[RMDB]
RNA sequence: GGGAACGACUCGAGUAGAGUCGAAAAACUGGCUCAAGGGACGGGUCGACAAACAAAAACAACAAGCCCGAAAUCAUAAUAAAAACAAAGCACGCACCUACUUGGGGGGGAGCUUCGGCUCCCCCAGGCUCAUAUCAUAGUUCGCUAUGAUAUGAGCAAAAGAAACAACAACAACAAC
Reactivity to 2A3 in 0.01 (KOAc 150mM, MgCl2 10mM, bicine 150mM(pH8.5), 24C), signal-to-noise 3, nucleotides 027 to 126: a000c000u040g000g030c000u010c030a100a150g110g030g030a040c020g020g000g000u040c020g070a000c050a000a170a010c020a000a090a020a020a010c100a020a000c020a070a000g070c020c020c010g040a080a070a040u120c060a010u050a150a000u100a040a120a030a010a040c080a060a090a030g030c040a010c080g030c000a070c030c030u130a120c040u130u080g060g000g000g000g000g070g000a000g000c020u060u070c190g070g000c000u030c000c010c000c000c000a000g000
Reactivity to DMS in 0.01 (KOAc 150mM, MgCl2 10mM, bicine 150mM(pH8.5), 24C), signal-to-noise 2, nucleotides 027 to 126: a090c150u050g060g000c010u000c000a090a090g020g000g000a110c040g040g000g020u010c050g000a130c230a090a100a120c140a070a020a120a070a070c180a050a030c070a080a100g020c000c010c000g000a040a110a130u070c110a030u020a040a070u090a030a020a070a080a190c170a050a130a090g000c040a010c030g040c030a010c000c010u010a030c000u010u010g000g000g000g010g020g000g030a000g010c020u010u000c100g030g000c030u030c080c000c000c000c000a000g000